The record gives the reactivity of an RNA of 177 nucleotides to 2A3.
For 2A3 the reverse transcriptase was SuperScript II with manganese.
The RNA was probed in 150 mM KOAc, 10 mM MgCl2 and 150 mM bicine (pH 8.5) at 24 C.
[RMDB]
RNA sequence: GGGAACGACUCGAGUAGAGUCGAAAAGCUACCUCUACGGAGGUAGCAAAGAACAUGUACAGAAAAAGACAUGUUUAAGAAUCUUCAGAGCUACUUUAUUUUCAAGAGCUAUAUUGUCUUUUUUAAACCACUCACGCCAUUUCGAUGGCGUGAGUGGAAAAGAAACAACAACAACAAC
Reactivity to 2A3 in 0.01 (KOAc 150mM, MgCl2 10mM, bicine 150mM(pH8.5), 24C), signal-to-noise 1, nucleotides 027 to 126: g000c000u000a010c000c000u010c000u000a110c240g090g000a000g000g000u000a000g040c000a060a040a000g000a000a000c000a000u010g030u190a210c030a000g300a200a040a000a000a000g110a070c000a000u000g030u030u000u060a270a040g090a030a160u030c200u180u230c270a030g010a010g150c000u090a300c000u190u090u050a200u300u300u150u020c090a200a000g030a000g000c000u000a140u040a100u180u010g060u090c070u030u110u110u000u000u060a040a000a000